[RMDB]
Source: RMDB library M2RFPK, as collected in RNAgym.
The record gives the reactivity of an RNA of 207 nucleotides to 2A3.
2A3 adducts were read by reverse transcription with SuperScript II with manganese.
2A3 is a SHAPE reagent: it acylates the 2'-hydroxyl of flexible nucleotides of all four kinds.
RNA sequence: GGGAACGACUCGAGUAGAGUCGAAAAGAUCUGCGCCGAUCCGAAACGCUAGCAAACAGCCCGCAUCAUGUCGUCUCCUAACUUCGACGUGGUGAAAUACAGAGCUUAUGCGAGUAAGCCUGUUAGCAAUAGAUCAGAACGUUCGCGUUCUGAUCAACAUCUCUGGGGUGUUCGCACCCCAGAGAUGAAAAGAAACAACAACAACAAC
Reactivity to 2A3 in 0.01 (KOAc 150mM, MgCl2 10mM, bicine 150mM(pH8.5), 24C), signal-to-noise 2, nucleotides 027 to 156: g010a040u040c000u090g040c080g000c080c060g030a060u050c040c050g060a040a070a000c050g030c030u050a030g000c070a120a050a060c060a070g040c030c020c020g000c000a020u000c000a000u000g010u010c010g000u000c020u010c070c130u170a150a160c090u030u040c040g010a020c000g010u000g010g000u030g030a010a000a000u180a010c000a000g020a020g000c000u000u010a010u050g080c030g050a050g060u000a000a000g010c000c000u000g020u050u080a020g040c050a120a120u010a150g030a010u010c010a000g000a010a000c010g030u080u050c200g010c010g090u010u000c030u000g010a010u010c000a000a000